[RMDB]
RNA sequence: GGGAACGACUCGAGUAGAGUCGAAAAGGAUCAGGUUGAUUUACAAGAUAGUGAAGACUACCAGACUCGUUGGCAGCAUCAAGGAUCUAUCCGGAGAAGUGGAAAGACACCUUCAUAGGUACAACAGUAGUGUGUAACGGUUCGCCGUUACACACUAAAAAGAAACAACAACAACAAC
Reactivity to 2A3 in 0.01 (KOAc 150mM, MgCl2 10mM, bicine 150mM(pH8.5), 24C), signal-to-noise 3, nucleotides 027 to 126: g070g010a090u190c130a050g040g000u100u060g060a120u020u070u150a020c030a040a080g110a230u240a080g060u030g020a050a000g050a070c050u050a010c000c010a020g040a220c020u020c090g040u060u030g060g000c020a000g000c000a060u140c040a010a020g000g020a000u000c000u020a030u040c030c020g000g020a120g020a160a020g120u180g020g030a040a090a020g020a020c010a120c090c020u000u010c040a060u030a110g030g050u120a040c070a060a000c000a010g060
Reactivity to DMS in 0.01 (KOAc 150mM, MgCl2 10mM, bicine 150mM(pH8.5), 24C), signal-to-noise 2, nucleotides 027 to 126: g000g010a060u000c060a060g030g010u020u030g000a150u000u000u000a080c100a100a180g060a040u040a040g000u000g000a120a060g010a110c040u020a020c090c070a070g000a050c090u060c040g020u000u000g000g090c060a010g000c090a000u020c130a070a020g020g010a120u020c020u000a070u000c050c050g010g080a010g060a030a140g000u050g000g000a120a110a070g000a090c130a020c000c010u020u000c120a130u010a100g000g040u010a050c090a040a080c140a110g040